[RMDB]
RNA sequence: GGGAACGACUCGAGUAGAGUCGAAAAGAUAUGGAUCAUGGGGAGCAGUCACCAUCGGAAACGAUGGAAGUCUGCGACGAUCCCGCUGAUCCUAAGUCAAAGAACCGGAAGUUCGCUUCCGGUUCAACAUAGCAGUCUGGUUCGCCAGACUGCUAUGAAAAGAAACAACAACAACAAC
Reactivity to 2A3 in 0.01 (KOAc 150mM, MgCl2 10mM, bicine 150mM(pH8.5), 24C), signal-to-noise 1, nucleotides 027 to 126: g010a040u130a020u100g000g000a010u010c020a070u190g020g000g020g050a010g040c020a000g000u040c020a000c090c020a000u010c000g000g050a050a060a040c000g000a000u000g000g030a050a040g010u000c010u030g000c000g010a040c000g020a010u020c000c000c000g080c050u020g000a000u000c000c010u050a130a030g020u050c050a150a170a160g020a010a020c000c000g000g000a010a000g020u090u300c300g010c260u000u010c000c000g000g000u010u000c000a010a000
Reactivity to DMS in 0.01 (KOAc 150mM, MgCl2 10mM, bicine 150mM(pH8.5), 24C), signal-to-noise 3, nucleotides 027 to 126: g010a040u030a300u010g010g010a010u000c010a010u010g000g010g000g010a080g020c010a010g010u000c040a250c000c030a000u000c010g010g020a070a090a200c000g030a010u000g000g020a070a100g000u000c010u000g000c000g020a080c220g010a130u000c000c000c020g010c120u000g000a000u000c000c010u000a020a080g000u000c020a080a160a180g000a010a000c000c000g010g000a010a010g010u010u030c300g020c010u000u000c010c000g000g010u000u000c000a010a090